[RMDB]
RNA sequence: GGGAACGACUCGAGUAGAGUCGAAAAAGCGAUGAUACGUCAUCGCAACGAUUGCCUGAUCGUAAAACAGGAGACGGCCGUGGCCGCGACCACGUAAAAAAGCGUAACGUGGUCUACGGACCAUGAAAAAAGCGCGGAACGUUCGCGUUCCGCGCAACGUCUAACUAGUCUUCGGACUAGUUAGACGAAAAGAAACAACAACAACAAC
Reactivity to 2A3 in 0.01 (KOAc 150mM, MgCl2 10mM, bicine 150mM(pH8.5), 24C), signal-to-noise 2, nucleotides 027 to 156: a000g010c000g000a000u010g000a010u050a080c180g060u030c010a000u010c000g000c000a010a020c000g000a010u000u020g030c010c000u000g010a000u020c040g140u290a000a040a000a050c020a020g030g030a050g100a070c180g060g040c060c030g000u010g000g000c010c000g000c000g000a050c040c060a000c010g020u050a050a050a080a080a030a000g030c020g040u060a040a020c000g000u000g000g020u020c010u030a040c080g030g020a050c000c010a020u060g080a030a000a050a040a010a000g000c000g010c020g010g020a000a030c000g020u090u100c180g000c020g080u000u020c000c000g050c000g000c000a000a000